[RMDB]
RNA sequence: GGGAACGACUCGAGUAGAGUCGAAAAGAUUACGUGUCGUUGCGGAAUCGAUACUACGCACGAGAUUCCAAGGUCUCUGUAGUACGUCCGCUGGUGACGUCUUUGGAGUCACGUUCGAUAUACGAAAGCUAUCUACUAGGUUCGCCUAGUAGAUAGCAAAAGAAACAACAACAACAAC
Reactivity to DMS in 0.01 (KOAc 150mM, MgCl2 10mM, bicine 150mM(pH8.5), 24C), signal-to-noise 6, nucleotides 027 to 126: g010a130u020u010a030c100g010u000g010u000c010g010u000u000g010c010g000g010a020a050u040c040g000a170u010a010c000u000a000c000g030c200a100c240g000a020g020a010u010u020c210c160a190a090g010g010u000c010u010c000u020g000u010a010g000u000a000c010g000u000c000c000g000c010u000g000g020u010g000a000c020g010u030c050u000u030u030g010g000a130g000u000c010a010c010g000u050u010c000g000a030u010a050u020a090c060g000a090a090a090
Reactivity to 2A3 in 0.01 (KOAc 150mM, MgCl2 10mM, bicine 150mM(pH8.5), 24C), signal-to-noise 7, nucleotides 027 to 126: g060a050u110u150a020c030g010u020g010u020c010g030u040u070g010c000g000g020a010a020u160c020g010a010u000a010c000u000a000c020g040c070a040c140g000a000g000a010u130u070c190c100a110a100g080g000u000c010u000c010u030g010u010a010g000u010a010c010g010u000c000c010g000c020u020g030g010u020g020a010c050g150u040c040u060u080u190g140g010a040g000u020c010a000c020g030u110u080c010g010a030u010a010u010a080c050g050a090a050a010

Source: RMDB library OK1LIB, as collected in RNAgym. An RNA of 177 nucleotides, treated with DMS and 2A3 and read out base by base. For DMS the reverse transcriptase was MarathonRT. The reactions ran in a buffer of 150 mM KOAc, 10 mM MgCl2 and 150 mM bicine (pH 8.5), at 24 C.